About this RNA:
The record gives the reactivity of an RNA of 177 nucleotides to DMS and 2A3. The DMS profile rests on 2,107 reads.

RNA sequence: GGGAACGACUCGAGUAGAGUCGAAAAGUUAGUUAAUGCUGCUAACACACAUCUUAAGCAUGGCGGUGGUAUCGCUGGUGCUAUUAAUGCGGCUUCAAAAGGGGCUGUCCAAAAAGAGUCAGAUGAGGUGAUGUUAAUUCUUCGGAAUUAACAUCACAAAAGAAACAACAACAACAAC
Reactivity to DMS in 0.01 (KOAc 150mM, MgCl2 10mM, bicine 150mM(pH8.5), 24C), signal-to-noise 2, nucleotides 027 to 126: g000u010u000a010g010u000u010a080a070u030g000c180u000g020c020u000a050a020c010a160c130a110c040a030u010c080u000u010a070a050g010c020a030u010g000g010c020g010g000u010g010g030u020a060u000c010g020c010u000g030g090u000g000c000u000a090u010u010a080a080u010g010c040g000g000c030u020u000c020a050a050a080a110g020g010g000g010c020u000g010u000c040c070a040a070a060a110a130g000a050g000u000c060a030g000a110u000g010a110g010
Reactivity to 2A3 in 0.01 (KOAc 150mM, MgCl2 10mM, bicine 150mM(pH8.5), 24C), signal-to-noise 3, nucleotides 027 to 126: g010u000u010a000g000u010u100a120a060u220g090c110u050g000c000u020a030a000c020a000c000a010c010a080u000c030u100u100a020a010g000c010a020u030g010g030c010g020g020u080g100g140u150a030u160c000g000c020u060g000g050u020g000c030u030a050u080u110a060a040u120g010c010g000g000c000u030u050c050a150a190a100a140g030g010g000g000c030u020g010u060c020c010a070a140a010a010a010g060a020g020u040c040a020g020a090u030g050a040g120